[RMDB]
RNA sequence: GGGAACGACUCGAGUAGAGUCGAAAACAGUAAAUCUCAAGUGUGAAUCAGAACGAGCCUCUCUUCCUAGGAGUUGCUUUGUCUGCUAUUUUUGUCAAAGUAACAAGAGAAGUAACCACCACAACUCUGGGACCUAGACCAUCUUCCCACAGGAAGACCCUAGUGAUGACUUCGGUCAUCACUAGGGAAAAGAAACAACAACAACAAC
Reactivity to 2A3 in 0.01 (KOAc 150mM, MgCl2 10mM, bicine 150mM(pH8.5), 24C), signal-to-noise 1, nucleotides 027 to 156: c010a030g070u120a060a120a220u000c040u010c040a000a090g040u030g000u050g140a020a150u080c040a080g030a140a010c080g000a010g040c000c000u090c000u010c000u030u020c000c020u000a050g000g020a060g040u010u000g000c010u000u030u010g030u010c020u020g110c030u080a220u140u200u070u300u220g060u010c060a090a070a000g060u010a000a070c070a090a000g020a000g020a080a000g020u070a010a080c050c060a020c010c000a020c000a000a190c020u020c150u050g060g000g020a050c040c000u060a060g030a050c100c000a030u060c010u000u000c000c040c000a080c080a110g010g040a030a010g030a020
An RNA of 207 nucleotides, treated with 2A3 and read out base by base. Reactivities are given for positions 27 through 156. Values are in units of 0.01, from 0 to 300, in steps of 10. The data come from the RNA Mapping Database (RMDB), library OK3TST. The reactions ran in a buffer of 150 mM KOAc, 10 mM MgCl2 and 150 mM bicine (pH 8.5), at 24 C.